[RMDB]
RNA sequence: GGGAACGACUCGAGUAGAGUCGAAAAAGCUGUGAGGCCAGGGGACAGAGGGUCUCCUUCCGCCUGGACGUUGCAGAGCCCAAGGUGGUGUUUGCUAAGGAGCAGCUGGCACGCAGGAAGCUGCAGGGAGACAGGACGGAUUCGUCCGUCCUGUCUCAAAAGAAACAACAACAACAAC
Reactivity to 2A3 in 0.01 (KOAc 150mM, MgCl2 10mM, bicine 150mM(pH8.5), 24C), signal-to-noise 1, nucleotides 027 to 126: a000g100c060u050g010u000g060a050g040g050c020c020a000g000g000g030g010a010c030a070g110a090g080g160g060u000c040u060c000c000u030u030c000c070g020c000c000u020g020g070a020c030g070u080u120g030c020a010g010a020g030c010c010c000a050a060g000g020u080g000g000u010g040u080u120u090g000c040u050a040a150g120g000a070g070c000a020g070c020u030g030g000c000a030c060g100c020a060g100g040a040a030g070c030u060g050c100a070g100g060
Reactivity to DMS in 0.01 (KOAc 150mM, MgCl2 10mM, bicine 150mM(pH8.5), 24C), signal-to-noise 2, nucleotides 027 to 126: a070g000c000u010g000u000g020a130g000g010c010c040a040g010g010g010g000a020c160a150g000a130g020g020g000u000c060u000c010c020u000u000c020c020g020c010c000u010g000g010a040c060g000u010u000g000c020a030g010a200g000c000c000c000a090a100g030g010u000g000g010u000g010u000u010u010g030c000u000a160a100g020g000a150g000c010a030g000c010u000g000g010c050a060c080g000c040a070g010g030a160a090g000c030u000g000c030a100g000g000
An RNA of 177 nucleotides, treated with 2A3 and DMS and read out base by base. The 2A3 profile rests on 1,068 reads. Conditions: 150 mM KOAc, 10 mM MgCl2 and 150 mM bicine (pH 8.5), 24 C. DMS adducts were read by reverse transcription with MarathonRT.